[RMDB]
RNA sequence: GGGAACGACUCGAGUAGAGUCGAAAAUCAGAUGGUCGACAGUCACUUCUGUGCCAUUUUCCAAUUGCAGUGUCAGGCUGCCAUCGGCAUUUUUGAUAACCGCUUUCGGUACUGCCUCGGUAUGCAGGAUCACCUCUGCAUUCGUGCAGAGGUGAUCAAAAGAAACAACAACAACAAC
Reactivity to DMS in 0.01 (KOAc 150mM, MgCl2 10mM, bicine 150mM(pH8.5), 24C), signal-to-noise 1, nucleotides 027 to 126: u000c090a090g000a000u010g010g010u000c080g030a080c050a010g000u010c230a100c210u000u010c020u000g030u000g010c050c050a070u010u010u000u000c000c020a080a040u000u000g050c040a010g000u010g020u000c110a020g000g000c020u000g000c020c010a030u000c110g000g010c040a040u010u010u000u010u000g000a130u050a140a070c060c030g020c300u010u000u010c040g020g020u000a040c070u000g000c000c030u000c120g010g030u000a080u000g010c040a050g000